RNA sequence: GGGAACGACUCGAGUAGAGUCGAAAAGCUAGUCGGUGACGACUAGCAGCCACGACUAAGGUCGUGGGAAGAUGCUCACAAACUGGGAAGUGGCAUCAAUAACUACAUCAUUCCCAGAAACCGGAUUAACGGAUAACAUUAAAAUUUAAGAUGUAGGGAUGAGGGAUAGUUUCGACUAUCCCUCAUCAAAAGAAACAACAACAACAAC
Reactivity to 2A3 in 0.01 (KOAc 150mM, MgCl2 10mM, bicine 150mM(pH8.5), 24C), signal-to-noise 4, nucleotides 027 to 156: g000c000u000a000g010u010c000g040g020u050g060a030c010g000a010c000u000a000g000c000a000g020c000c000a000c000g000a000c010u070a140a140g240g000u000c000g010u000g000g030g000a050a110g010a000u020g000c010u130c300a030c010a020a230a100c090u170g060g040g050a110a030g010u010g000g000c010a000u000c010a000a010u150a040a020c000u000a000c000a000u050c010a020u020u050c010c000c000a000g020a040a000a000c000c000g080g020a200u210u240a100a050c010g000g060a120u100a080a030c100a060u060u190a040a050a120a080u120u150u080a050a040g010a010u010g000u010a000g010g050
Reactivity to DMS in 0.01 (KOAc 150mM, MgCl2 10mM, bicine 150mM(pH8.5), 24C), signal-to-noise 1, nucleotides 027 to 156: g010c010u000a000g050u020c060g000g010u000g010a190c000g010a010c000u000a000g010c000a080g000c020c000a030c000g000a020c020u000a110a200g040g020u000c000g010u010g000g010g020a140a260g000a020u000g040c010u000c050a080c000a060a030a150c040u010g010g040g000a170a300g000u010g010g030c020a010u010c000a170a040u000a050a080c000u000a000c010a030u020c020a230u010u000c010c000c000a040g000a120a060a080c020c000g010g000a300u000u020a120a090c040g060g010a210u000a040a080c050a070u000u010a000a030a040a100u000u060u000a070a240g000a020u000g030u000a040g030g000
The record gives the reactivity of an RNA of 207 nucleotides to 2A3 and DMS. High 2A3 reactivity points to a flexible backbone, as in loops and unpaired stretches. The RNA was probed in 150 mM KOAc, 10 mM MgCl2 and 150 mM bicine (pH 8.5) at 24 C. DMS adducts were read by reverse transcription with MarathonRT. 2A3 adducts were read by reverse transcription with SuperScript II with manganese.